[RMDB]
RNA sequence: GGGAACGACUCGAGUAGAGUCGAAAAUUAGACGUUCGCGUCUAAAUCACGGGGUCGUUGGUCUCGAAGAGGGACAUGCUCUGAAGCCUCCACGGAGCAACAGCCUCCCCACCUUCCCAACGACGGAGGCACCCUUAAAGCUACCUUCGGGUAGCAAUUAUUGGCCCUAUUUCGAUAGGGCCAAUAAAAAAGAAACAACAACAACAAC
Reactivity to 2A3 in 0.01 (KOAc 150mM, MgCl2 10mM, bicine 150mM(pH8.5), 24C), signal-to-noise 1, nucleotides 027 to 156: u010u000a000g000a000c030g040u050u110c300g110c030g100u010c000u010a040a010a020u210c090a080c130g010g000g000g010u000c010g050u050u060g060g000u030c000u020c090g050a180a040g110a180g130g020g000a010c070a030u160g000c000u010c000u010g030a150a060g050c000c000u000c000c010a010c000g010g000a020g000c010a020a070c030a040g040c030c060u020c030c000c000c000a080c010c020u010u020c020c020c010a000a000c030g160a010c030g010g010a000g000g010c020a030c000c010c000u040u200a150a030a000g030c000u000a020c000c000u060u070c120g070g010g000u050a000g020c010a000a000